[RMDB]
RNA sequence: GGGAACGACUCGAGUAGAGUCGAAAAGAAAGAAAUGGCCAAACAACAUGGAUGAUGAAGGAAGAACUCACCCCUGGGCCUCCAAGAGAACUACAUGCAGACGUCUGCGGUUUUUGAUCUGACCAAACGAUUCCAAUAUUUUCGAAUAUUGGAAUCGAAAAGAAACAACAACAACAAC
Reactivity to DMS in 0.01 (KOAc 150mM, MgCl2 10mM, bicine 150mM(pH8.5), 24C), signal-to-noise 5, nucleotides 027 to 126: g010a120a100a120g010a080a100a060u030g020g000c040c030a120a110a110c160a080a170c090a110u010g010g000a090u000g010a080u010g000a130a110g020g030a070a060g010a060a060c050u000c060a040c050c000c000c010u000g000g000g000c020c000u000c020c050a050a060g000a080g010a040a030c050u000a040c080a040u010g000c030a060g000a140c200g010u030c020u000g020c080g010g010u000u000u010u000u000g010a070u000c060u000g000a130c060c080a070a070a130
Reactivity to 2A3 in 0.01 (KOAc 150mM, MgCl2 10mM, bicine 150mM(pH8.5), 24C), signal-to-noise 7, nucleotides 027 to 126: g100a020a120a010g100a020a100a050u190g040g000c030c020a080a090a060c040a060a040c020a090u070g060g020a040u050g030a020u070g080a090a080g100g020a020a060g040a080a030c010u010c010a060c000c010c000c000u010g010g020g000c000c000u020c020c020a080a010g040a000g020a100a030c030u070a030c050a060u110g000c010a020g020a120c060g090u070c030u020g020c010g040g010u000u030u000u040u070g070a070u000c030u030g060a060c050c000a040a060a000

This 177-nucleotide RNA was probed chemically with DMS and 2A3. Source: RMDB libraries RFM100 and RFMREP, as collected in RNAgym. Conditions: 150 mM KOAc, 10 mM MgCl2 and 150 mM bicine (pH 8.5), 24 C. 2A3 adducts were read by reverse transcription with SuperScript II with manganese. DMS adducts were read by reverse transcription with MarathonRT.